[RMDB]
RNA sequence: GGGAACGACUCGAGUAGAGUCGAAAAGAUAUGGAUUCCAGACAUGAUCUGCGUAGGAUAGGAUCGGAAACGAUCCCUGAUCAACAGCUGGAUCCUAAGUCAAAAUCAGGACGUUCGCGUCCUGAAACAAUAGUCGUUGGUUCGCCAACGACUAUUGAAAAGAAACAACAACAACAAC
Reactivity to DMS in 0.01 (KOAc 150mM, MgCl2 10mM, bicine 150mM(pH8.5), 24C), signal-to-noise 4, nucleotides 027 to 126: g020a030u010a300u000g000g000a020u000u010c010c000a020g010a070c100a180u000g020a040u000c010u000g010c190g030u020a100g020g010a140u020a090g010g010a010u000c000g000g010a070a090a160c020g020a000u000c000c000c040u000g000a030u000c010a040a070c230a120g020c000u000g010g000a030u000c000c010u000a020a130g000u000c040a060a090a130a150u010c000a000g010g000a020c000g030u010u020c230g010c020g010u000c000c000u000g000a010a040a090
Reactivity to 2A3 in 0.01 (KOAc 150mM, MgCl2 10mM, bicine 150mM(pH8.5), 24C), signal-to-noise 4, nucleotides 027 to 126: g010a010u050a070u130g010g000a040u300u080c020c010a010g030a090c080a190u130g010a050u030c020u110g080c210g280u290a150g100g250a180u150a180g000g020a010u000c010g000g010a100a050a000c020g000a000u000c000c000c020u020g010a020u000c020a040a120c020a130g070c000u000g000g000a020u000c010c000u000a110a010g040u000c030a050a000a000a300u060c000a000g000g020a010c010g010u030u100c300g040c000g100u000c000c010u000g010a010a000a000
The data come from the RNA Mapping Database (RMDB), library TTRDEL.
An RNA of 177 nucleotides, treated with DMS and 2A3 and read out base by base.
For DMS, 4,157 sequencing reads were counted.
Reactivities are given for positions 27 through 126.